[RMDB]
Structure probing data (DMS and 2A3) for a 207-nucleotide construct. The DMS profile rests on 6,561 reads. For 2A3, 5,805 sequencing reads were counted. Source: RMDB library PDB130, as collected in RNAgym. High DMS reactivity at an A or C suggests that its Watson-Crick edge is free. Reactivities are given for positions 27 through 156.

RNA sequence: GGGAACGACUCGAGUAGAGUCGAAAAUAGCCGGUCCUAAGUCAUACCGCAACUCGACUAUGACGAAAUGGGAAACGGGUUAAUAUUCCCGUGCCACGGGGUCGAUCACGCUGGGCAUCGCCCAGUCGAACCGUCCAACUCCGUGGAAGCCGUAAUGCGUGGUAUUUAAGUUCGCUUAAAUACCACGAAAAGAAACAACAACAACAAC
Reactivity to DMS in 0.01 (KOAc 150mM, MgCl2 10mM, bicine 150mM(pH8.5), 24C), signal-to-noise 3, nucleotides 027 to 156: u000a040g040c020c000g040g010u000c020c030u000a100a270g000u000c020a040u000a060c040c020g010c080a120a160c180u020c020g030a150c030u000a020u000g000a090c020g010a080a100a150u000g020g010g010a020a070a050c050g010g020g020u000u010a030a110u010a280u010u010c000c010c000g030u000g030c000c010a010c000g030g000g000g000u000c020g010a100u000c080a140c120g010c000u000g010g030g000c000a160u000c250g020c000c000c010a030g020u000c030g030a080a080c050c050g020u010c090c070a050a050c000u000c000c030g020u000g000g000a000a070g040c030c000g000u000a090a140u000g000
Reactivity to 2A3 in 0.01 (KOAc 150mM, MgCl2 10mM, bicine 150mM(pH8.5), 24C), signal-to-noise 6, nucleotides 027 to 156: u080a010g040c010c010g050g020u060c000c000u050a120a010g000u000c000a000u010a030c040c010g050c110a080a140c050u050c060g030a020c020u010a000u000g000a000c010g060a170a090a160u180g020g010g000a040a140a040c040g040g000g000u030u050a100a020u050a120u110u040c000c000c000g000u050g020c000c000a000c000g010g000g000g020u010c020g010a030u080c050a010c080g000c000u000g010g000g000c030a220u170c170g000c000c010c000a000g040u040c010g020a050a030c040c050g020u060c020c010a040a030c010u010c000c000g000u000g000g000a010a020g030c010c030g120u120a070a040u150g030